Structure probing data (DMS and 2A3) for a 177-nucleotide construct.

[RMDB]
RNA sequence: GGGAACGACUCGAGUAGAGUCGAAAAGGUGCCGGGCUCUCUUUCACAUCUUCGAUCGUUUUUUUGCUCACGAUGAGGACCUGGCGUGCGUUGAAGGGGAUUUGGUACACAUCAAGCAAUGCCGGAAUCACGCAUACCUAUUCGUAGGUAUGCGUGAAAAAGAAACAACAACAACAAC
Reactivity to DMS in 0.01 (KOAc 150mM, MgCl2 10mM, bicine 150mM(pH8.5), 24C), signal-to-noise 3, nucleotides 027 to 126: g020g000u010g020c020c000g000g000g030c050u000c010u000c000u000u000u020c070a080c120a160u020c090u000u000c080g020a050u000c050g000u010u000u020u050u000u010u040g000c070u000c080a070c110g000a020u000g000a050g010g000a090c090c040u000g010g020c040g030u010g000c080g020u010u030g010a040a080g010g000g000g000a080u010u000u020g000g010u010a070c120a040c130a060u020c080a020a090g000c050a060a120u020g000c010c000g000g000a100a090
Reactivity to 2A3 in 0.01 (KOAc 150mM, MgCl2 10mM, bicine 150mM(pH8.5), 24C), signal-to-noise 5, nucleotides 027 to 126: g090g010u030g000c000c000g010g000g020c020u010c000u010c000u030u130u150c070a080c030a150u030c040u070u050c040g160a080u020c060g030u010u000u020u030u030u140u190g070c040u050c010a020c030g020a030u060g020a040g000g010a020c000c020u050g040g000c010g000u030g010c020g040u040u080g020a070a030g010g000g000g030a050u040u040u170g050g010u080a050c070a010c020a060u080c040a040a050g060c030a050a070u120g030c000c030g040g040a030a040
Background: For DMS, 5,207 sequencing reads were counted. The reactions ran in a buffer of 150 mM KOAc, 10 mM MgCl2 and 150 mM bicine (pH 8.5), at 24 C. Values cover nucleotides 27 to 126. For 2A3 the reverse transcriptase was SuperScript II with manganese.